This 177-nucleotide RNA was probed chemically with 2A3 and DMS. The 2A3 profile rests on 4,878 reads. Reactivities are given for positions 27 through 126. The reactions ran in a buffer of 150 mM KOAc, 10 mM MgCl2 and 150 mM bicine (pH 8.5), at 24 C. It was measured as part of the RMDB library OK1LIB.

[RMDB]
RNA sequence: GGGAACGACUCGAGUAGAGUCGAAAAUUGCGGCGACUGCGGCCAUACCUUCGGCUGCCCAAACUGCUCCGCCAAAAUGGUACUGCACCAACGCGCCCGCCAACUGCGCUGUCACCACUGCGACCACCGCUACUAUGACGUUCGCGUCAUAGUAGCGAAAAGAAACAACAACAACAAC
Reactivity to 2A3 in 0.01 (KOAc 150mM, MgCl2 10mM, bicine 150mM(pH8.5), 24C), signal-to-noise 5, nucleotides 027 to 126: u140u130g030c030g040g000c030g030a050c080u090g010c020g030g000c040c000a060u180a140c020c000u040u070c040g010g020c010u050g010c040c000c020a100a080a030c060u070g000c020u020c000c020g020c020c030a030a040a020a100u090g030g020u050a070c040u080g020c020a020c030c010a050a050c030g000c010g040c030c020c010g020c020c010a040a050c030u050g000c020g020c040u020g050u070c000a020c070c010a060c040u050g020c030g030a020c000c010a060c020
Reactivity to DMS in 0.01 (KOAc 150mM, MgCl2 10mM, bicine 150mM(pH8.5), 24C), signal-to-noise 2, nucleotides 027 to 126: u030u030g000c080g050g000c040g000a090c100u000g000c050g000g030c030c030a140u040a100c150c050u000u020c060g000g050c040u000g010c070c020c030a040a080a050c060u040g000c000u000c010c000g000c000c030a060a040a150a020u020g020g010u000a080c130u010g000c090a120c050c010a060a120c140g000c040g010c030c000c070g000c040c000a030a070c060u000g030c040g020c000u000g000u000c070a060c010c020a100c100u080g000c030g010a120c120c040a060c140